[RMDB]
RNA sequence: GGGAACGACUCGAGUAGAGUCGAAAAGAUAUGGACAGUACUGUGACAUGAACCAGGGUCGGAAACGACCUCAUGGUUCAACAGCACACAUGUACUGUCCUAAGUCAAAUCGCCCUUCGGGGCGAAAGUAUGCAUGCUACUUCGGUAGCAUGCAUACAAAAGAAACAACAACAACAAC
Reactivity to DMS in 0.01 (KOAc 150mM, MgCl2 10mM, bicine 150mM(pH8.5), 24C), signal-to-noise 2, nucleotides 027 to 126: g000a010u000a300u000g010g020a000c000a020g010u020a000c000u020g020u000g020a240c140a160u000g010a000a000c010c000a010g000g020g000u000c070g000g000a100a080a190c010g000a010c010c000u000c020a080u000g000g040u000u010c000a040a080c200a160g000c220a140c020a010c010a000u010g010u000a000c030u000g000u000c000c010u000a000a090g010u000c040a040a220a130u000c000g050c000c000c000u000u000c220g080g010g000g010c020g020a000a020a110
Reactivity to 2A3 in 0.01 (KOAc 150mM, MgCl2 10mM, bicine 150mM(pH8.5), 24C), signal-to-noise 1, nucleotides 027 to 126: g050a000u060a040u130g010g000a000c000a020g010u020a000c020u010g030u030g080a070c080a220u230g000a010a010c000c000a000g030g000g040u000c000g010g040a070a050a070c000g010a010c020c020u030c040a160u070g000g000u000u000c000a010a000c020a030g300c070a010c000a000c000a090u290g010u010a000c020u010g000u020c000c020u000a000a010g000u000c000a020a020a090u010c000g000c010c000c000u030u050c300g040g000g030g000c060g000a000a010a010

The record gives the reactivity of an RNA of 177 nucleotides to DMS and 2A3. For DMS the reverse transcriptase was MarathonRT. For 2A3 the reverse transcriptase was SuperScript II with manganese.